[RMDB]
RNA sequence: GGGAACGACUCGAGUAGAGUCGAAAACAAGGCGCUGCGCAUAAUCACUGAAUGGUGCGCGCCAGCUUUCAACCCGGUCCGCAACGGUUGUGGAAAUAGCCGGCUGCAUCCGCGUAUAGGCGGUCAACCCUAUUAUCGGUUUCGACCGAUAAUAGGGAAAAGAAACAACAACAACAAC
Reactivity to DMS in 0.01 (KOAc 150mM, MgCl2 10mM, bicine 150mM(pH8.5), 24C), signal-to-noise 4, nucleotides 027 to 126: c080a150a100g010g000c020g020c050u010g060c020g020c000a040u000a110a090u010c140a150c230u010g000a090a140u000g000g020u010g030c000g010c030g050c030c020a050g000c080u000u000u000c140a120a140c030c010c000g010g000u020c070c070g010c020a060a070c030g000g000u010u000g030u000g010g000a040a080a020u010a060g000c010c030g000g010c080u020g000c030a090u000c010c010g010c070g020u010a100u020a080g030g000c010g010g000u000c150a100a150
Reactivity to 2A3 in 0.01 (KOAc 150mM, MgCl2 10mM, bicine 150mM(pH8.5), 24C), signal-to-noise 4, nucleotides 027 to 126: c050a040a100g010g000c020g010c070u190g000c050g000c040a040u120a140a070u250c090a080c250u190g120a140a100u150g080g020u020g010c010g000c010g000c000c010a000g030c040u020u070u080c040a030a070c000c030c000g020g080u100c050c050g000c020a030a020c020g060g000u020u030g020u030g090g060a080a100a050u050a030g000c000c000g040g050c060u010g010c010a050u040c010c020g000c020g060u120a140u100a300g170g000c020g000g010u030c030a080a090